[RMDB]
RNA sequence: GGGAACGACUCGAGUAGAGUCGAAAAAUAUGGGUCUGCAGCAACCUCGGUUUUUGCCUCUUUAGAAGAAAUAAUUCAACUGAGGGGCGUAAGGCAGGAGAGAUCAAGGCAAAUUUUAGAGCAGGAGUGAAAGUUUAUUAAAAAGUUUUAGAGCAGGACAUACAUACGGAUUCGUCCGUAUGUAUGUAAAAGAAACAACAACAACAAC
Reactivity to 2A3 in 0.01 (KOAc 150mM, MgCl2 10mM, bicine 150mM(pH8.5), 24C), signal-to-noise 2, nucleotides 027 to 156: a010u140a130u060g000g030g000u000c040u070g030c030a010g010c000a070a000c020c010u010c030g000g060u000u010u010u120u240g030c000c000u030c000u120u130u220a070g020a130a010g070a040a100a010u290a100a160u170u040c040a000a020c030u000g010a010g000g000g000g000c010g000u030a020a030g050g000c000a000g080g000a030g000a000g000a050u090c020a010a030g010g000c000a050a120a040u080u150u020u080a110g000a000g010c010a020g000g040a010g010u000g000a050a000a030g020u110u100u060a050u070u200a120a100a070a010a000g040u060u040u100u200a020g010a010g030c010a010g060g030
Reactivity to DMS in 0.01 (KOAc 150mM, MgCl2 10mM, bicine 150mM(pH8.5), 24C), signal-to-noise 1, nucleotides 027 to 156: a090u000a050u010g010g050g050u010c040u010g020c080a100g080c020a080a120c050c000u000c060g090g010u010u010u030u000u010g030c000c020u000c010u000u000u000a110g030a070a240g000a050a060a100u000a070a170u000u000c070a010a300c000u010g010a050g000g050g000g050c060g030u000a030a030g020g050c070a040g020g010a050g000a110g010a070u010c010a070a020g030g040c060a050a060a170u000u010u010u010a080g000a100g040c000a080g000g000a060g060u000g020a030a030a110g010u010u010u000a060u040u010a060a100a110a140a090g000u000u000u010u010a040g030a120g010c060a040g000g010
The record gives the reactivity of an RNA of 207 nucleotides to 2A3 and DMS. For 2A3 the reverse transcriptase was SuperScript II with manganese. The RNA was probed in 150 mM KOAc, 10 mM MgCl2 and 150 mM bicine (pH 8.5) at 24 C. Reactivities are rounded to 0.1 and cut off at 0 and 3. Reactivities are given for positions 27 through 156. It was measured as part of the RMDB library OK3TST. For DMS the reverse transcriptase was MarathonRT.